[RMDB]
RNA sequence: GGGAACGACUCGAGUAGAGUCGAAAAGUCUAGCGAACGGAUCCCACCCGGGACACACGCAAGUCGCGAAUUAGGCCGACCGGCCAAGGUCAAUAGCAGAACUCAACUGCAUGAGUAAGCUAGACGAGAUAAUACCUAGUUUCGACUAGGUAUUAUCAAAAGAAACAACAACAACAAC
Reactivity to DMS in 0.01 (KOAc 150mM, MgCl2 10mM, bicine 150mM(pH8.5), 24C), signal-to-noise 9, nucleotides 027 to 126: g010u000c010u000a010g010c010g010a190a080c060g000g010a080u000c000c000c010a190c300c030c060g020g010g010a110c130a070c060a100c080g010c050a090a110g010u000c090g010c050g010a080a090u000u010a100g010g010c040c040g010a170c110c140g000g010c020c060a100a110g000g010u000c020a080a100u010a100g010c020a040g000a080a090c140u000c160a060a090c040u000g000c040a090u000g000a080g000u000a050a240g000c000u000a020g010a020c010g010a120
Reactivity to 2A3 in 0.01 (KOAc 150mM, MgCl2 10mM, bicine 150mM(pH8.5), 24C), signal-to-noise 7, nucleotides 027 to 126: g000u000c000u000a000g000c010g030a050a050c030g030g030a060u010c000c000c000a030c020c030c000g020g040g030a020c020a010c010a010c100g030c070a080a070g160u130c060g010c020g070a090a170u160u060a170g060g000c030c030g070a150c050c070g040g000c030c020a010a020g030g000u030c020a030a110u050a170g000c010a010g030a180a090c060u060c200a050a140c030u030g010c020a040u060g010a010g070u040a020a010g000c000u010a000g000a010c010g000a020